[RMDB]
RNA sequence: GGGAACGACUCGAGUAGAGUCGAAAAGUUCCGUCGAGUCGCCAUACAGUUCGACUCGUCGGUCAGCUGGCCGGGCAACGACCGCCUGCUGUCGCCCAACGAGUUCGAAAUCAAGCGGUACGUGGACGGCGAGGGUUACAACAUCGGCCCGAGCAACAAAUCAUGCUAUCUUCGGAUAGCAUGAUUUAAAAGAAACAACAACAACAAC
Reactivity to DMS in 0.01 (KOAc 150mM, MgCl2 10mM, bicine 150mM(pH8.5), 24C), signal-to-noise 1, nucleotides 027 to 156: g020u010u000c000c010g020u000c000g030a200g020u000c030g010c100c040a210u070a180c130a100g020u010u000c030g020a040c000u000c020g020u000c020g040g020u000c010a040g010c000u000g000g020c040c050g030g020g000c010a150a070c050g000a120c010c020g040c000c000u000g000c000u000g000u010c030g020c210c040c020a070a050c030g000a090g020u000u040c050g000a000a070a160u010c130a060a140g030c010g030g010u000a020c050g000u010g040g000a120c040g000g000c000g030a300g020g000g020u000u000a110c070a120a120c120a120u000c040g010g000c000c000c010g000a140g000c030a060a000c090
Reactivity to 2A3 in 0.01 (KOAc 150mM, MgCl2 10mM, bicine 150mM(pH8.5), 24C), signal-to-noise 2, nucleotides 027 to 156: g010u060u020c010c010g000u010c010g010a020g030u010c010g010c070c010a070u180a220c110a030g100u010u020c000g000a000c000u000c000g000u000c000g030g020u110c010a000g000c000u050g040g020c130c080g000g040g000c060a260a060c070g140a070c030c010g000c000c010u050g000c010u040g040u110c100g020c040c010c000a000a050c000g020a020g050u180u120c020g020a040a010a050u170c060a060a150g040c010g020g060u070a110c040g070u040g010g010a010c010g060g000c020g000a160g000g000g000u150u120a120c110a180a050c030a240u160c120g020g000c050c000c000g020a030g020c010a000a030c030

The record gives the reactivity of an RNA of 207 nucleotides to DMS and 2A3. It was measured as part of the RMDB library OK3TST.